An RNA of 177 nucleotides, treated with 2A3 and DMS and read out base by base. Conditions: 150 mM KOAc, 10 mM MgCl2 and 150 mM bicine (pH 8.5), 24 C. 2A3 adducts were read by reverse transcription with SuperScript II with manganese. The DMS profile rests on 116,504 reads.
RNA sequence: GGGAACGACUCGAGUAGAGUCGAAAAGCAGCUACACGCUAUAUGAAAAGUAGCACGUUACUUUUCAUCACUGACUCGCGAUUCAGUGAAGUUAUGAUCGCGGGCUCGUAACUUAUAGCGUGUAGAAGAUACGAUACUUAUUCGUGAGUGUUGUAUCAAAAGAAACAACAACAACAAC
Reactivity to 2A3 in 0.01 (KOAc 150mM, MgCl2 10mM, bicine 150mM(pH8.5), 24C), signal-to-noise 9, nucleotides 027 to 126: g080c060a010g040c000u000a000c000a000c000g000c000u000a000u000a000u020g010a000a000a000a000g010u020a010g070c120a030c180g100u100u010a000c000u010u000u000u000c010a020u030c010a010c030u070g030a030c010u030c070g030c040g070a070u140u090c010a010g040u030g140a080a010g040u100u090a060u080g020a020u040c030g000c030g070g060g000c050u010c010g020u020a040a020c010u030u020a000u000a000g000c000g000u000g000u000a000g000a000a000
Reactivity to DMS in 0.01 (KOAc 150mM, MgCl2 10mM, bicine 150mM(pH8.5), 24C), signal-to-noise 9, nucleotides 027 to 126: g020c110a140g010c000u000a000c000a000c000g010c000u000a000u000a000u000g000a010a000a000a000g010u000a020g010c190a120c270g010u030u000a000c000u000u000u000u000c000a050u030c100a020c030u010g000a040c060u010c080g010c090g010a050u030u010c020a030g000u010g010a060a060g000u010u010a040u010g010a020u000c020g020c060g010g000g000c120u000c060g010u000a030a060c130u000u000a010u000a000g010c000g010u000g000u000a000g010a050a080